[RMDB]
RNA sequence: GGGAACGACUCGAGUAGAGUCGAAAAAUAGACAGAACCAAGAACUGGAAGACGUAUCGUCAGACGUUUCAGGAACAACAGCAUCUCCUAAGCGGCCAGGGGCGCGGCAAUCCGUUCAGUUACCUGAUGCCUCAAGGCAGUCGCUUUUUGUAAAACGGAUGAAAUAGUCUUUCGAGACUAUUUCAUCAAAAGAAACAACAACAACAAC
Reactivity to DMS in 0.01 (KOAc 150mM, MgCl2 10mM, bicine 150mM(pH8.5), 24C), signal-to-noise 2, nucleotides 027 to 156: a140u010a080g020a230c040a080g010a140a140c030c020a080a140g040a130a130c030u000g000g030a100a080g000a050c030g010u000a070u020c070g020u010c070a160g020a140c040g000u010u010u000c060a190g000g040a050a110c040a070a100c050a110g020c050a100u000c030u000c030c020u000a080a070g060c050g020g010c020c050a100g000g000g020g010c020g040c080g000g000c030a050a050u000c030c060g010u000u000c050a060g010u000u000a050c030c000u010g010a080u020g030c000c020u000c060a060a080g030g010c060a080g010u000c040g000c010u000u000u000u000u010g010u000a040a040a070a090c120g010
Reactivity to 2A3 in 0.01 (KOAc 150mM, MgCl2 10mM, bicine 150mM(pH8.5), 24C), signal-to-noise 4, nucleotides 027 to 156: a000u080a010g070a020c040a050g090a090a010c030c020a050a050g040a090a030c040u060g040g060a060a030g070a060c020g080u080a060u260c070g040u100c110a040g040a090c020g000u020u060u050c050a020g010g060a100a040c030a010a020c010a050g050c010a070u050c020u000c040c020u040a050a000g020c010g020g000c000c020a010g000g000g000g000c010g000c020g010g030c030a010a090u100c030c030g030u040u110c040a050g000u030u100a150c010c000u060g000a070u090g020c000c000u050c050a040a050g040g000c030a000g030u010c020g000c000u020u050u020u080u160g100u090a060a070a010a000c100g070
Structure probing data (DMS and 2A3) for a 207-nucleotide construct. The 2A3 profile rests on 2,479 reads. Reactivities are given for positions 27 through 156. The RNA was probed in 150 mM KOAc, 10 mM MgCl2 and 150 mM bicine (pH 8.5) at 24 C.